[RMDB]
RNA sequence: GGGAACGACUCGAGUAGAGUCGAAAAUACGCGAGGUUCGCCUCGCGUAAAAGAGGAGCGUAAACGUGAGCGUACGUAGUGCUGUACAUCGAUCCUACACGAAUGCACAUGGUUUCGACCAUGUGAACAUUUCUGCGCGUUUCGACGCGCAGAAAUGAAAAGAAACAACAACAACAAC
Reactivity to 2A3 in 0.01 (KOAc 150mM, MgCl2 10mM, bicine 150mM(pH8.5), 24C), signal-to-noise 1, nucleotides 027 to 126: u050a000c000g000c010g000a000g010g010u140u020c230g100c080c000u020c020g000c020g000u000a000a000a000a020g130a030g050g040a030g010c010g000u120a100a080a060c000g030u060g020a060g110c100g100u050a010c010g030u010a050g050u000g100c040u090g060u100a020c040a110u040c050g070a050u000c010c000u050a000c050a010c050g120a090a030u130g010c000a000c000a010u000g000g000u090u070u050c120g070a030c000c000a000u020g000u000g000a010a000
Reactivity to DMS in 0.01 (KOAc 150mM, MgCl2 10mM, bicine 150mM(pH8.5), 24C), signal-to-noise 1, nucleotides 027 to 126: u000a010c010g020c000g050a010g000g040u000u000c130g050c000c000u000c000g020c000g000u000a020a000a040a140g000a110g010g000a110g050c040g000u030a060a100a030c070g000u010g000a040g010c220g030u020a020c060g000u000a110g000u000g000c000u000g010u020a060c070a160u000c050g010a030u010c000c010u000a000c130a040c160g000a060a090u000g000c000a020c020a010u000g000g000u000u000u000c100g000a020c000c000a010u010g000u000g000a080a160
Overview: This 177-nucleotide RNA was probed chemically with 2A3 and DMS. Values cover nucleotides 27 to 126. Conditions: 150 mM KOAc, 10 mM MgCl2 and 150 mM bicine (pH 8.5), 24 C. For 2A3, 1,310 sequencing reads were counted. For DMS the reverse transcriptase was MarathonRT. The DMS profile rests on 1,019 reads. For 2A3 the reverse transcriptase was SuperScript II with manganese. High 2A3 reactivity points to a flexible backbone, as in loops and unpaired stretches.